[RMDB]
RNA sequence: GGGAACGACUCGAGUAGAGUCGAAAAUGAGACACCUUCGGGUGUCUCACAUUAAGCUGACCAGCUAUGAGGUCAAUAUCGACAUGCACAAAUAGAAUAAAACAGCUUGCUCCUUCGGGAGCAAGAAGUACUAGACUUUCUUCGGAAAGUCUAGUACAAAAGAAACAACAACAACAAC
Reactivity to DMS in 0.01 (KOAc 150mM, MgCl2 10mM, bicine 150mM(pH8.5), 24C), signal-to-noise 3, nucleotides 027 to 126: u020g010a010g020a010c000a000c000c000u000u010c190g060g020g020u000g010u010c000u000c000a000c110a080u000u000a080a100g010c080u010g000a090c040c020a110g000c050u010a090u000g000a170g020g000u010c020a070a100u010a060u010c090g030a060c040a050u000g010c030a060c100a050a050a030u010a060g020a170a100u010a050a050a080a080c130a110g030c010u000u000g000c000u000c000c000u000u020c160g030g020g000a010g020c000a000a000g000a030a060
Reactivity to 2A3 in 0.01 (KOAc 150mM, MgCl2 10mM, bicine 150mM(pH8.5), 24C), signal-to-noise 3, nucleotides 027 to 126: u070g000a000g000a000c010a000c000c000u030u050c240g040g010g000u000g000u000c010u000c000a000c000a000u040u060a050a020g020c010u010g040a030c020c010a010g040c060u120a140u190g110a120g080g010u010c050a030a030u180a090u170c070g030a020c050a080u100g020c070a050c030a060a120a050u150a090g110a080a070u150a150a080a020a010c030a010g030c000u000u000g010c000u000c020c000u020u040c180g090g000g000a000g000c000a000a000g000a000a000
Background:
An RNA of 177 nucleotides, treated with DMS and 2A3 and read out base by base. The RNA was probed in 150 mM KOAc, 10 mM MgCl2 and 150 mM bicine (pH 8.5) at 24 C. For 2A3, 3,482 sequencing reads were counted.